RNA sequence: GGGAACGACUCGAGUAGAGUCGAAAAGAUAUGGAUGCAAACGGAGCGGCAAUUCAUGGCUUAAGUGUGUCGGAAACGACACACGGAGGCCAUGAAUUGCCGAACUACUCCUAUGCAUCCUAAGUCAGCUUAACGUUAAGUUCGCUUAACGUUAAGCAAAAGAAACAACAACAACAAC
Reactivity to DMS in 0.01 (KOAc 150mM, MgCl2 10mM, bicine 150mM(pH8.5), 24C), signal-to-noise 2, nucleotides 027 to 126: g000a050u010a300u000g010g010a020u000g000c010a000a110a050c300g000g000a030g000c000g010g000c010a030a010u000u000c000a020u020g020g030c000u000u000a110a300g030u000g000u000g000u000c000g000g000a140a080a300c000g010a020c000a030c000a000c000g010g000a100g000g000c000c010a000u020g010a000a010u000u020g000c010c000g010a000a010c090u030a300c010u010c000c000u000a300u000g000c000a010u010c010c010u010a020a090g000u010c060a100

This 177-nucleotide RNA was probed chemically with DMS. Conditions: 150 mM KOAc, 10 mM MgCl2 and 150 mM bicine (pH 8.5), 24 C. Source: RMDB library TTRINS, as collected in RNAgym.